Conditions: 150 mM KOAc, 10 mM MgCl2 and 150 mM bicine (pH 8.5), 24 C.
The record gives the reactivity of an RNA of 177 nucleotides to 2A3 and DMS.
High 2A3 reactivity points to a flexible backbone, as in loops and unpaired stretches.
2A3 adducts were read by reverse transcription with SuperScript II with manganese.
[RMDB]
RNA sequence: GGGAACGACUCGAGUAGAGUCGAAAAGAUAUGGAUCAUCAGGCAACAGCGUUGACUCGGAAACGAGUCACGACGACAUGCCUGGUCCUAAGUCAAAUCCCUACUCAAGUUCGCUUGAGUAGGGAAACCGAUUCUGACAGUUCGCUGUCAGAAUCGGAAAAGAAACAACAACAACAAC
Reactivity to 2A3 in 0.01 (KOAc 150mM, MgCl2 10mM, bicine 150mM(pH8.5), 24C), signal-to-noise 1, nucleotides 027 to 126: g050a000u070a060u200g010g000a010u110c090a010u070c060a130g000g000c020a050a080c000a270g080c020g080u160u220g010a010c010u010c020g040g070a020a120a030c000g010a020g020u000c030a000c000g020a050c000g060a060c040a050u060g000c000c000u000g000g010u000c000c000u060a120a010g030u000c010a000a020a190u040c000c000c010u000a000c010u000c020a000a020g020u080u100c190g090c190u000u020g000a000g000u000a000g000g000g000a030a020a020
Reactivity to DMS in 0.01 (KOAc 150mM, MgCl2 10mM, bicine 150mM(pH8.5), 24C), signal-to-noise 1, nucleotides 027 to 126: g010a040u010a270u000g000g000a040u000c110a160u000c080a020g030g000c000a040a090c200a190g000c010g010u010u000g010a000c010u000c000g010g010a060a060a130c040g000a040g010u000c000a020c000g010a100c060g030a050c240a250u000g000c000c000u010g000g030u030c000c010u010a080a070g000u010c060a090a120a200u000c010c000c000u020a000c000u000c000a000a030g000u000u000c170g020c000u010u000g000a010g010u000a000g010g000g010a010a040a080